[RMDB]
RNA sequence: GGGAACGACUCGAGUAGAGUCGAAAACUAAUUAUGUAACUGCUAAUUCUCUUCCUCUGUAGCACAUCUAAAUUCCUAUUUGUCUCUCAAGGCCCAGUUCACAUAACCUUUCUUUACCCUCCCAGUCUAUGCUCCAAAUGAAGAGAGAGAACCAUAAUAGGACUAAAUAUUUCGAUAUUUAGUCCUAAAAAGAAACAACAACAACAAC
Reactivity to 2A3 in 0.01 (KOAc 150mM, MgCl2 10mM, bicine 150mM(pH8.5), 24C), signal-to-noise 1, nucleotides 027 to 156: c020u050a100a080u110u180a030u160g070u050a070a030c080u100g020c030u030a110a070u010u000c030u000c000u090u020c010c020u050c060u010g000u080a020g000c060a030c030a090u020c020u110a040a170a130u110u010c010c050u080a110u050u110u080g070u000c090u020c010u020c050a040a020g030g000c000c000c000a010g000u030u050c030a010c000a060u050a030a000c000c020u010u070u050c020u090u090u140a080c020c000c000u000c000c020c000a000g010u000c020u030a080u220g000c000u000c000c020a030a030a030u020g020a020a000g030a000g000a000g000a000g000a020a000c000c000a000u020a130a050
Reactivity to DMS in 0.01 (KOAc 150mM, MgCl2 10mM, bicine 150mM(pH8.5), 24C), signal-to-noise 3, nucleotides 027 to 156: c050u010a060a110u010u000a110u010g010u000a070a130c050u010g010c010u000a040a150u000u010c020u000c030u010u010c020c010u020c060u010g020u000a080g000c040a050c070a050u000c080u000a050a080a170u000u010c010c000u030a130u010u010u010g020u000c010u010c010u000c060a140a100g000g040c020c040c000a060g020u010u020c020a010c020a150u000a040a020c040c010u000u000u000c010u000u000u000a150c130c140c020u000c000c010c000a120g030u000c080u000a050u000g000c040u000c030c010a020a050a040u010g000a060a050g010a050g020a060g020a140g020a090a130c040c020a040u010a070a260